Chemical mapping of a 177-nucleotide RNA with DMS and 2A3.
[RMDB]
RNA sequence: GGGAACGACUCGAGUAGAGUCGAAAAGACUGCGUGCACUUGAGACGAUAUCGAGCCGGAAAUUAAUCGAUAAUGUCUCGUGUAGUGGAUACGAUCCGGCAAGUAUCGACUACCUGUGCUCGUAGGACGAGCAUCAUCGUUUCGACGAUGAUGCUCGAAAAGAAACAACAACAACAAC
Reactivity to DMS in 0.01 (KOAc 150mM, MgCl2 10mM, bicine 150mM(pH8.5), 24C), signal-to-noise 2, nucleotides 027 to 126: g000a140c000u000g000c000g000u010g000c000a020c000u030u000g000a050g010a010c000g040a110u000a000u010c010g030a200g010c020c000g000g030a080a090a050u030u010a090a060u030c010g000a010u030a030a120u020g000u000c020u010c000g050u010g040u000a000g000u010g020g040a010u000a010c050g000a120u010c020c000g010g000c020a120a220g030u000a020u040c010g000a020c000u000a020c000c300u040g000u000g000c000u000c000g010u000a010g000g000a040
Reactivity to 2A3 in 0.01 (KOAc 150mM, MgCl2 10mM, bicine 150mM(pH8.5), 24C), signal-to-noise 7, nucleotides 027 to 126: g060a020c000u010g000c010g000u000g000c010a010c020u080u110g000a000g000a000c010g040a030u000a000u060c010g000a010g000c000c030g000g120a050a130a120u300u300a060a130u140c000g020a010u010a070a070u160g010u000c000u010c050g110u130g000u070a020g020u050g160g010a000u000a020c010g020a020u030c000c000g010g000c040a060a000g000u000a000u010c000g070a010c010u040a080c000c030u050g000u010g000c000u000c000g000u010a010g000g010a000
DMS adducts were read by reverse transcription with MarathonRT. The RNA was probed in 150 mM KOAc, 10 mM MgCl2 and 150 mM bicine (pH 8.5) at 24 C.